[RMDB]
RNA sequence: GGGAACGACUCGAGUAGAGUCGAAAAGAUAUGGAUAUGCUCGAGGAUCGUACGGAUUCGGAAACGAAUUUACGGGAGAACAUAUCCUAAGUCAAAAGAAGACCGAUUGUUCGCAAUCGGUCUUCAAGUAUCACCUAGUGUUCGCACUAGGUGAUACAAAAGAAACAACAACAACAAC
Reactivity to DMS in 0.01 (KOAc 150mM, MgCl2 10mM, bicine 150mM(pH8.5), 24C), signal-to-noise 3, nucleotides 027 to 126: g000a060u000a300u010g000g000a040u000a010u010g020c020u010c000g000a100g000g000a040u010c010g000u000a030c300g000g000a050u010u010c010g000g010a100a130a200c000g000a020a000u000u000u000a020c020g010g000g000a060g000a030a020c010a020u000a010u000c000c010u000a010a070g010u010c030a100a080a140a170g000a010a000g020a020c000c000g000a020u010u000g000u000u040c210g010c010a000a000u000c030g020g020u010c010u000u000c000a040a090
Reactivity to 2A3 in 0.01 (KOAc 150mM, MgCl2 10mM, bicine 150mM(pH8.5), 24C), signal-to-noise 2, nucleotides 027 to 126: g020a000u080a040u130g000g000a000u000a000u030g010c010u010c040g120a300g030g040a110u030c030g000u020a050c120g170g030a040u000u010c000g030g030a090a040a070c000g000a000a000u020u020u030a000c020g000g050g030a010g010a010a000c010a030u010a010u000c000c000u000a170a050g040u050c020a020a050a060a160g030a010a000g010a020c000c000g010a000u010u010g050u060u150c300g000c170a000a030u000c030g020g000u000c010u000u010c000a010a010

Structure probing data (DMS and 2A3) for a 177-nucleotide construct. The reactions ran in a buffer of 150 mM KOAc, 10 mM MgCl2 and 150 mM bicine (pH 8.5), at 24 C. The data come from the RNA Mapping Database (RMDB), library TTRDEL.